[RMDB]
RNA sequence: GGGAACGACUCGAGUAGAGUCGAAAACCUUUUUGACCCAGUAUUGCAGACUUAAAAACAAGCAUGUUUUCAAAUGGCGCUAUGAGCUGCCAAUGAUGUAUCACCAUCAUAUCUCAUUAUUCUUUGCCAUGUUCCAAUCUUUCGAGAUUGGAACAUGAAAAGAAACAACAACAACAAC
Reactivity to 2A3 in 0.01 (KOAc 150mM, MgCl2 10mM, bicine 150mM(pH8.5), 24C), signal-to-noise 9, nucleotides 027 to 126: c000c000u030u030u010u040u120g060a040c010c010c020a030g020u070a110u060u120g010c030a020g040a130c050u130u130a050a070a020a040a040c050a070a050g080c050a080u100g070u030u070u050u080c090a110a130a090u090g020g000c010g000c040u060a080u200g040a050g050c070u080g020c060c020a020a020u030g020a010u010g040u060a220u170c070a030c090c010a010u030c010a020u020a090u080c060u010c040a070u030u240a090u150u010c010u020u020u010g100c080
Reactivity to DMS in 0.01 (KOAc 150mM, MgCl2 10mM, bicine 150mM(pH8.5), 24C), signal-to-noise 4, nucleotides 027 to 126: c020c030u000u010u010u010u020g010a150c020c010c020a110g000u010a070u010u010g000c040a040g020a080c180u000u010a030a080a060a120a050c140a060a130g000c080a030u020g020u000u010u000u000c090a060a130a090u010g010g000c010g010c040u000a040u030g020a050g010c120u010g030c050c050a050a050u010g000a030u000g000u000a060u030c140a040c300c020a020u000c000a060u000a090u010c030u000c020a070u010u010a100u010u010c040u000u000u000g010c180
Source information
The record gives the reactivity of an RNA of 177 nucleotides to 2A3 and DMS. It was measured as part of the RMDB libraries RFM100 and RFMREP. Conditions: 150 mM KOAc, 10 mM MgCl2 and 150 mM bicine (pH 8.5), 24 C. DMS adducts were read by reverse transcription with MarathonRT. 2A3 adducts were read by reverse transcription with SuperScript II with manganese.